About this RNA: The record gives the reactivity of an RNA of 177 nucleotides to 2A3 and DMS. DMS adducts were read by reverse transcription with MarathonRT. 2A3 is a SHAPE reagent: it acylates the 2'-hydroxyl of flexible nucleotides of all four kinds. The DMS profile rests on 1,923 reads. The RNA was probed in 150 mM KOAc, 10 mM MgCl2 and 150 mM bicine (pH 8.5) at 24 C. Source: RMDB libraries RFM100 and RFMREP, as collected in RNAgym.
RNA sequence: GGGAACGACUCGAGUAGAGUCGAAAAAGAUAGGUUACGACCUAUCAUAGCUUAUCAGACUGAUGUUGACUGUUGAAUCUCAUGGCAACAGCAGUCGAUGGGCUGUCAGUAUAGCUACGGCUAUACAUCCCUGUCCGUAGUUCGCUACGGACAGGGAAAAAGAAACAACAACAACAAC
Reactivity to 2A3 in 0.01 (KOAc 150mM, MgCl2 10mM, bicine 150mM(pH8.5), 24C), signal-to-noise 4, nucleotides 027 to 126: a000g020a000u020a000g000g050u070u150a050c220g020a010c070c000u020a000u000c020a010u070a000g000c000u020u030a010u000c010a100g000a000c000u000g000a020u030g040u050u040g070a260c000u030g100u210u100g080a150a180u110c060u050c190a050u090g010g000c000a000a000c000a000g000c000a000g000u000c000g020a010u000g010g040g000c000u010g080u070c090a010g010u000a000u000a000g010c000u020a060c270g050g000c000u000a000u000a010c000a030
Reactivity to DMS in 0.01 (KOAc 150mM, MgCl2 10mM, bicine 150mM(pH8.5), 24C), signal-to-noise 1, nucleotides 027 to 126: a030g000a000u000a000g000g010u000u000a160c150g000a030c070c000u000a000u010c000a010u000a020g020c000u030u000a030u000c000a180g000a010c040u030g000a020u000g000u000u000g030a120c000u000g000u010u060g000a000a050u040c180u010c030a000u000g010g000c000a000a010c000a020g000c020a010g020u000c000g010a050u000g000g000g000c000u000g000u050c260a060g000u000a000u020a040g010c000u010a150c150g010g000c000u000a000u000a010c000a180